[RMDB]
RNA sequence: GGGAACGACUCGAGUAGAGUCGAAAAUGCGCGGGAGCGUAGCCCCGUAGUUGCAGUGGCUGUCAUCACGCAGCGCACCGCGCUCAGAUGUCAGCGUGGGGGAGUGCGAACGGGAAUGCGGCAAUGAGUACUUUUCCUGUUUCGACAGGAAAAGUACAAAAGAAACAACAACAACAAC
Reactivity to DMS in 0.01 (KOAc 150mM, MgCl2 10mM, bicine 150mM(pH8.5), 24C), signal-to-noise 3, nucleotides 027 to 126: u000g000c020g010c030g030g010g020a130g010c020g010u010a070g010c070c010c000c100g040u000a030g020u000u000g000c050a100g020u010g020g020c000u010g020u000c040a040u000c040a110c210g000c130a040g020c010g020c030a140c130c130g010c000g010c000u000c050a110g000a050u000g010u000c070a020g020c030g020u010g000g000g000g000g010a130g010u000g000c020g000a090a040c070g000g000g000a060a070u010g010c080g010g000c050a110a070u000g000a210
Reactivity to 2A3 in 0.01 (KOAc 150mM, MgCl2 10mM, bicine 150mM(pH8.5), 24C), signal-to-noise 1, nucleotides 027 to 126: u060g000c050g020c040g010g060g030a090g020c040g040u040a030g030c000c000c010c030g060u090a140g070u050u090g000c040a030g070u070g170g030c000u010g050u070c000a060u020c010a040c180g040c120a030g000c030g030c010a160c100c150g000c000g000c000u000c010a100g020a040u070g040u060c020a030g020c060g000u080g010g010g010g000g000a050g060u060g050c070g000a060a040c000g010g020g080a000a120u130g020c040g020g000c000a020a120u140g030a060

Chemical mapping of a 177-nucleotide RNA with DMS and 2A3. Conditions: 150 mM KOAc, 10 mM MgCl2 and 150 mM bicine (pH 8.5), 24 C. It was measured as part of the RMDB library OK2TRN. The 2A3 profile rests on 1,814 reads.